Conditions: 150 mM KOAc, 10 mM MgCl2 and 150 mM bicine (pH 8.5), 24 C.
This 177-nucleotide RNA was probed chemically with DMS and 2A3.
It was measured as part of the RMDB library RFMREP.
[RMDB]
RNA sequence: GGGAACGACUCGAGUAGAGUCGAAAAAAAAUGGGAAAGACCAGAGAUCCUGCUGUCUCCUCAGCAUCAUUCCAGGCACAGAACGCCAGAAAAUGGAAUGGUGCUGUUGAAUCAACAGGUUCUAAAAGAAUAAUCUAAUCUUCGGAUUAGAUUAUUCAAAAGAAACAACAACAACAAC
Reactivity to DMS in 0.01 (KOAc 150mM, MgCl2 10mM, bicine 150mM(pH8.5), 24C), signal-to-noise 2, nucleotides 027 to 126: a060a060a130a090u030g000g010g000a100a030a050g000a110c050c030a150g000a050g010a010u000c000c000u000g010c010u000g020u000c070u000c000c030u010c000a010g010c000a000u000c000a000u010u000c000c000a040g000g010c010a100c140a180g020a100a170c210g000c000c000a120g010a040a060a070a240u010g010g000a030a020u000g010g010u000g010c000u000g000u000u000g000a040a030u000c040a000a020c010a010g000g000u000u000c000u000a030a020a050a120
Reactivity to 2A3 in 0.01 (KOAc 150mM, MgCl2 10mM, bicine 150mM(pH8.5), 24C), signal-to-noise 2, nucleotides 027 to 126: a000a000a000a030u160g000g000g030a200a230a020g080a150c020c020a020g010a000g000a140u030c010c010u000g000c000u010g020u010c040u000c070c000u000c000a000g000c000a000u000c000a010u010u030c010c000a080g010g000c030a040c000a090g300a300a030c100g020c000c000a040g230a040a150a020a040u090g000g000a010a000u000g010g000u010g000c000u000g000u000u000g010a000a010u020c010a000a010c000a000g020g000u030u000c030u060a070a070a010a020